[RMDB]
RNA sequence: GGGAACGACUCGAGUAGAGUCGAAAAACAUUUUAUUACCUUUGCCACGUUCUGUUGGUUAGAAGCAAGUCACUAGGCCAGCCCACAUUCAAGAAGGGAUAUACAAGAAUGUGAAUACCAGGAGGCAACUAUCAUUCUUAUCUUAGUCUCCUGUAAAUGAAAAUAGUAAUUUCGAUUACUAUUUUCAAAAAGAAACAACAACAACAAC
Reactivity to DMS in 0.01 (KOAc 150mM, MgCl2 10mM, bicine 150mM(pH8.5), 24C), signal-to-noise 3, nucleotides 027 to 156: a140c040a100u010u010u000u020a080u010u000a180c010c030u000u000u000g020c030c020a100c060g020u010u000c070u010g000u000u000g010g000u000u000a100g010a060a050g010c020a070a120g000u000c050a090c070u000a130g020g000c020c040a120g000c030c030c000a030c060a080u000u010c050a070a180g000a120a120g000g000g010a090u000a080u010a080c060a080a170g010a060a030u010g030u000g020a100a150u010a140c190c010a020g010g010a060g000g000c010a090a050c020u000a060u000c020a100u010u000c150u000u000a080u000c040u010u000a050g010u000c000u000c010c000u010g010u000a010a060a120
Reactivity to 2A3 in 0.01 (KOAc 150mM, MgCl2 10mM, bicine 150mM(pH8.5), 24C), signal-to-noise 3, nucleotides 027 to 156: a000c040a040u180u180u130u150a170u080u260a180c010c000u080u040u060g030c010c020a060c060g030u070u060c090u120g110u120u010g040g020u030u050a050g020a110a010g000c060a050a020g040u120c020a050c110u080a040g100g000c020c000a010g000c000c010c010a010c000a030u080u080c040a030a020g080a060a080g120g050g010a030u120a000u010a130c040a090a000g020a060a040u030g010u050g050a020a040u090a140c050c000a000g030g000a000g020g090c010a070a020c030u080a030u140c030a080u160u070c010u140u150a090u030c010u020u020a050g010u010c000u000c000c040u020g030u100a020a020a050
This 207-nucleotide RNA was probed chemically with DMS and 2A3. Source: RMDB library OK3TST, as collected in RNAgym. For 2A3 the reverse transcriptase was SuperScript II with manganese. Reactivities are given for positions 27 through 156. Conditions: 150 mM KOAc, 10 mM MgCl2 and 150 mM bicine (pH 8.5), 24 C.